[RMDB]
RNA sequence: GGGAACGACUCGAGUAGAGUCGAAAAUAACAUCGUAGUGUAAGACGUAAAGUCAACGUCGCUUGCCAGCAGGACCACCAAAGGAAUACGCUUCGGUAACUACUCGAGAUCCCAAGCGAUAACACAAGGUAUGGUAUAACUUCGGUUAUACCAUACCAAAAGAAACAACAACAACAAC
Reactivity to DMS in 0.01 (KOAc 150mM, MgCl2 10mM, bicine 150mM(pH8.5), 24C), signal-to-noise 3, nucleotides 027 to 126: u010a120a140c100a010u000c080g050u000a050g030u010g030u020a110a060g010a040c020g000u000a120a060a160g000u010c110a050a040c050g000u000c020g000c050u000u000g000c050c020a050g040c040a070g000g000a070c040c040a070c040c040a060a100a090g000g000a100a100u000a090c090g020c050u000u000c040g010g000u000a060a110c010u000a000c000u010c000g000a020g000a100u000c010c000c000a090a080g000c150g000a050u010a050a030c120a100c190a110a050
Reactivity to 2A3 in 0.01 (KOAc 150mM, MgCl2 10mM, bicine 150mM(pH8.5), 24C), signal-to-noise 3, nucleotides 027 to 126: u060a010a010c030a030u070c040g080u080a060g030u040g030u110a120a030g020a030c010g050u060a070a130a030g100u060c030a030a010c030g040u030c000g000c030u000u080g080c030c020a040g030c010a020g030g040a030c040c040a040c010c010a080a050a030g070g020a060a090u090a070c040g000c060u010u030c020g000g020u010a110a160c000u000a000c010u000c010g010a010g000a020u010c020c000c000a010a000g040c020g070a070u100a180a060c070a000c040a150a050